Structure probing data (DMS and 2A3) for a 207-nucleotide construct. Source: RMDB library OK3TST, as collected in RNAgym. For DMS, 1,457 sequencing reads were counted. The RNA was probed in 150 mM KOAc, 10 mM MgCl2 and 150 mM bicine (pH 8.5) at 24 C.

[RMDB]
RNA sequence: GGGAACGACUCGAGUAGAGUCGAAAAGCGUACGAAAAACGUACGAAUAAGUUAAGAUGGCAGAGCCCGGUAAUCGCAUAAAACUUAAAACUUUACAGUCAGAGGUUCAAUUCCUCUUCUUAACAUAAAUAUAGGAUAGCAAAAGCUAUCCGGAGAGGCUGUAUAUGGACUUCGGUCCAUGUACGGCAAAAGAAACAACAACAACAAC
Reactivity to DMS in 0.01 (KOAc 150mM, MgCl2 10mM, bicine 150mM(pH8.5), 24C), signal-to-noise 1, nucleotides 027 to 156: g030c000g090u000a000c030g020a020a180a070a120a160c010g030u000a050c020g040a080a130u010a060a120g000u000u010a040a020g010a070u000g000g040c010a200g000a090g010c020c060c060g110g030u000a030a050u000c020g020c040a200u010a010a090a110a180c060u000u000a160a050a110a120c020u020u010u010a060c000a200g000u000c070a130g000a100g040g040u000u000c110a100a300u000u030c010c020u000c010u000u000c010u000u000a010a060c000a090u040a060a110a100u010a300u000a030g000g020a000u000a010g010c000a030a140a030a120g020c000u000a000u000c000c000g000g000a130g000a100g000
Reactivity to 2A3 in 0.01 (KOAc 150mM, MgCl2 10mM, bicine 150mM(pH8.5), 24C), signal-to-noise 4, nucleotides 027 to 156: g060c000g000u000a010c010g130a060a010a050a120a090c010g000u020a000c000g010a040a100u120a100a010g000u020u030a060a010g030a060u100g060g020c070a070g030a060g150c040c020c030g050g020u090a110a050u130c060g060c100a090u120a070a130a030a070c020u140u110a070a080a100a110c040u200u230u200a070c050a060g050u090c040a020g050a030g030g000u030u100c010a030a040u100u070c000c000u000c000u030u030c000u030u060a020a020c010a040u190a110a210a010u300a060u120a140g000g000a000u000a000g000c010a120a080a300a000g010c000u000a000u010c000c000g000g000a120g000a020g080